Chemical mapping of a 207-nucleotide RNA with DMS and 2A3. The reactions ran in a buffer of 150 mM KOAc, 10 mM MgCl2 and 150 mM bicine (pH 8.5), at 24 C. Values cover nucleotides 27 to 156.
[RMDB]
RNA sequence: GGGAACGACUCGAGUAGAGUCGAAAAUGGGCCGUGUGCUUAACCAGGACAAGAUCUCCUUCUCUGCAACGUUGUUGCCAACUCAUGAUUCUCCUAACCUGUGCUUGGAGAGACGUGGACCCAGAGUAAAACGAAGGGUGCUUCGGCACCCUUCGAACUCAAAUUAUCAGUUCGCUGAUAAUUUGAGAAAAGAAACAACAACAACAAC
Reactivity to DMS in 0.01 (KOAc 150mM, MgCl2 10mM, bicine 150mM(pH8.5), 24C), signal-to-noise 1, nucleotides 027 to 156: u010g000g040g000c050c040g060u000g000u000g000c040u020u000a090a110c050c070a100g030g010a140c060a050a150g020a150u000c010u000c020c040u000u000c030u000c020u010g000c060a060a010c080g020u000u010g000u000u000g010c030c020a030a110c010u000c020a040u000g000a120u020u000c050u000c000c010u000a060a080c040c050u030g020u000g050c030u010u000g000g000a140g000a060g000a030c000g020u000g000g020a060c050c030c010a290g000a190g030u010a040a060a100a140c010g010a010a040g000g020g060u010g010c030u000u000c250g030g000c000a000c000c000c000u020u000c000g010a010a090
Reactivity to 2A3 in 0.01 (KOAc 150mM, MgCl2 10mM, bicine 150mM(pH8.5), 24C), signal-to-noise 1, nucleotides 027 to 156: u050g010g010g000c030c050g090u060g010u070g030c040u060u030a070a070c020c000a020g050g010a010c040a070a050g020a170u040c050u010c030c050u100u050c050u020c020u080g040c020a080a060c080g050u050u020g040u040u040g060c050c020a080a070c040u050c040a020u140g000a130u150u010c010u030c020c020u080a100a100c030c040u080g050u110g100c030u020u070g020g000a040g000a000g010a040c000g000u050g040g020a110c010c010c000a020g040a030g070u140a010a090a010a010c010g000a000a000g000g030g000u000g000c000u010u060c130g070g000c000a000c000c060c000u000u000c000g000a000a000